Background
Chemical mapping of a 177-nucleotide RNA with 2A3 and DMS. 2A3 is a SHAPE reagent: it acylates the 2'-hydroxyl of flexible nucleotides of all four kinds. DMS adducts were read by reverse transcription with MarathonRT. The reactions ran in a buffer of 150 mM KOAc, 10 mM MgCl2 and 150 mM bicine (pH 8.5), at 24 C. Source: RMDB library OK1LIB, as collected in RNAgym.

[RMDB]
RNA sequence: GGGAACGACUCGAGUAGAGUCGAAAAUGACAAACUUAGUAGUGUUUGUGAGGAUUAACAACAAUUAACACAGUGCGAGCUGUUUCUUGGCACGAAGAUCUCGAUGUCUAAGAAACCAGGAGGGCCCUAAGCCAUACCCUUUCGAGGGUAUGGCUUAAAAAGAAACAACAACAACAAC
Reactivity to 2A3 in 0.01 (KOAc 150mM, MgCl2 10mM, bicine 150mM(pH8.5), 24C), signal-to-noise 1, nucleotides 027 to 126: u080g010a010c000a000a040a000c030u110u130a140g050u090a060g150u240g020u040u000u020g010u070g140a120g300g000a170u190u300a180a060c170a010a010c000a030a040u010u090a000a000c080a000c000a060g060u070g150c010g000a070g000c070u000g010u000u000u050c000u040u000g000g020c000a000c000g000a070a000g020a110u080c000u000c000g240a260u000g010u000c000u030a000a000g000a000a010a000c010c000a000g040g000a140g000g070g000c000c000c000
Reactivity to DMS in 0.01 (KOAc 150mM, MgCl2 10mM, bicine 150mM(pH8.5), 24C), signal-to-noise 2, nucleotides 027 to 126: u000g000a150c090a080a040a070c010u060u040a150g020u000a140g010u010g010u010u030u000g000u000g000a130g000g000a190u000u020a120a160c080a210a100c130a080a090u010u010a030a060c120a070c120a030g000u000g000c030g000a030g000c000u000g050u000u000u000c000u000u000g000g010c010a010c040g000a040a130g020a120u010c060u000c000g000a060u000g000u020c000u030a000a010g000a010a000a030c020c160a040g010g000a060g010g000g000c020c000c010